RNA sequence: GGGAACGACUCGAGUAGAGUCGAAAAAGUAAAAGACCUAGAACAGAUAGCUGUGGUGGCUGGAGCCAUGAUUGGCGCAGCACUUGGAUGCAAGAACACCUAUCUUGUAAAGCGGCAUACCCCAUGCAUUAGCGUAAUUAUUCGUAAUUACGCUAAUAAAAGAAACAACAACAACAAC
Reactivity to 2A3 in 0.01 (KOAc 150mM, MgCl2 10mM, bicine 150mM(pH8.5), 24C), signal-to-noise 9, nucleotides 027 to 126: a000g190u210a070a100a040a030g080a070c020c010u050a060g070a150a020c030a020g030a050u040a030g040c110u070g040u050g050g070u060g100g010c010u020g020g050a070g000c010c000a040u160g050a210u220u200g020g000c020g000c010a000g000c000a010c030u030u040g070g050a070u210g150c030a030a020g020a080a010c010a020c020c010u020a020u030c000u020u060g040u090a080a090a030g060c050g020g000c030a010u110a200c010c010c010c000a030u110g030c020
Reactivity to DMS in 0.01 (KOAc 150mM, MgCl2 10mM, bicine 150mM(pH8.5), 24C), signal-to-noise 9, nucleotides 027 to 126: a100g010u020a060a080a110a100g000a140c050c010u010a080g020a210a060c070a030g000a040u000a020g000c150u010g020u000g000g020u010g010g020c010u000g000g010a300g020c010c000a040u020g020a190u040u010g000g010c010g000c050a030g000c020a140c010u000u000g000g010a140u030g010c040a030a030g010a130a060c040a020c080c020u010a030u000c010u000u020g010u010a040a090a140g010c110g000g000c040a080u010a070c030c010c010c040a110u030g000c150
Chemical mapping of a 177-nucleotide RNA with 2A3 and DMS. The RNA was probed in 150 mM KOAc, 10 mM MgCl2 and 150 mM bicine (pH 8.5) at 24 C. For DMS, 48,576 sequencing reads were counted. As a SHAPE reagent, 2A3 marks flexible, mostly unpaired nucleotides at the ribose 2'-OH.